[RMDB]
RNA sequence: GGGAACGACUCGAGUAGAGUCGAAAAUUGGACAACUGUUCUCCCUACUAGACUUUUAGCAUAGCUGGUUAAAAGUACUAUUACAGAUUGUUCAAUUGUAUGCCCCUUUCCUUUGAACGGAAUAUUAUAUAAAGCAUGAAUUCGUUCAUGCUUUAUAAAAAGAAACAACAACAACAAC
Reactivity to DMS in 0.01 (KOAc 150mM, MgCl2 10mM, bicine 150mM(pH8.5), 24C), signal-to-noise 9, nucleotides 027 to 126: u000u000g000g010a000c000a010a020c010u000g000u000u010c140u010c040c030c030u010a100c170u000a010g000a070c000u000u000u000u000a000g010c010a070u020a170g030c240u030g010g010u000u000a000a010a010a010g000u010a110c010u000a010u000u010a030c010a010g000a160u000u000g010u000u000c000a010a000u000u010g000u020a090u020g000c030c000c000c250u000u010u000c000c000u010u010u020g010a140a150c250g000g000a040a040u030a070u010u010a130
Reactivity to 2A3 in 0.01 (KOAc 150mM, MgCl2 10mM, bicine 150mM(pH8.5), 24C), signal-to-noise 9, nucleotides 027 to 126: u000u000g000g000a000c000a000a000c010u010g030u090u050c080u120c080c010c010u060a090c040u010a010g020a030c010u000u000u000u000a010g000c020a110u070a170g110c110u170g190g000u010u000a000a010a000a000g010u040a290c010u010a010u050u020a010c010a040g300a300u000u010g000u000u010c000a000a000u010u020g060u060a070u190g070c000c000c000c000u010u040u030c020c000u110u110u190g080a070a020c040g000g070a020a020u090a080u300u090a070
Structure probing data (DMS and 2A3) for a 177-nucleotide construct.
Conditions: 150 mM KOAc, 10 mM MgCl2 and 150 mM bicine (pH 8.5), 24 C.
The data come from the RNA Mapping Database (RMDB), libraries RFM100 and RFMREP.